[RMDB]
RNA sequence: GGGAACGACUCGAGUAGAGUCGAAAAAGCGAGGCGAUCAACCCUAUGCUGCUCCUCGAAAACGAGAGGACGCUUCAGAAGCACCAGAUGCUGCUCGAUCGGUGGAAGGAUGGGCAGGCCGGCAACGGCACCUGGAUUCGUUCGCGAGUCCAGGUGCAAAAGAAACAACAACAACAAC
Reactivity to DMS in 0.01 (KOAc 150mM, MgCl2 10mM, bicine 150mM(pH8.5), 24C), signal-to-noise 9, nucleotides 027 to 126: a080g000c050g010a050g010g020c020g010a080u020c130a120a140c060c010c020u010a180u030g010c020u010g010c050u010c010c010u000c030g010a090a060a110a100c200g010a130g010a050g000g000a040c100g010c020u000u010c060a080g010a160a050g010c040a070c060c080a060g010a070u020g020c030u000g000c040u010c050g000a060u020c040g000g000u000g010g000a080a100g000g010a070u020g000g000g010c040a080g000g000c020c010g000g000c090a080a090c150g000
Reactivity to 2A3 in 0.01 (KOAc 150mM, MgCl2 10mM, bicine 150mM(pH8.5), 24C), signal-to-noise 9, nucleotides 027 to 126: a000g070c060g010a020g020g020c020g020a030u070c060a040a140c010c010c000u040a080u120g030c030u020g010c020u000c000c000u010c020g080a120a110a090a110c140g030a070g000a010g140g010a020c040g000c000u060u040c050a080g040a150a010g020c020a030c020c030a020g030a090u100g020c020u020g010c010u020c040g100a110u020c030g010g050u060g050g060a070a040g060g020a040u060g000g010g010c020a020g030g020c010c010g020g000c020a060a060c050g060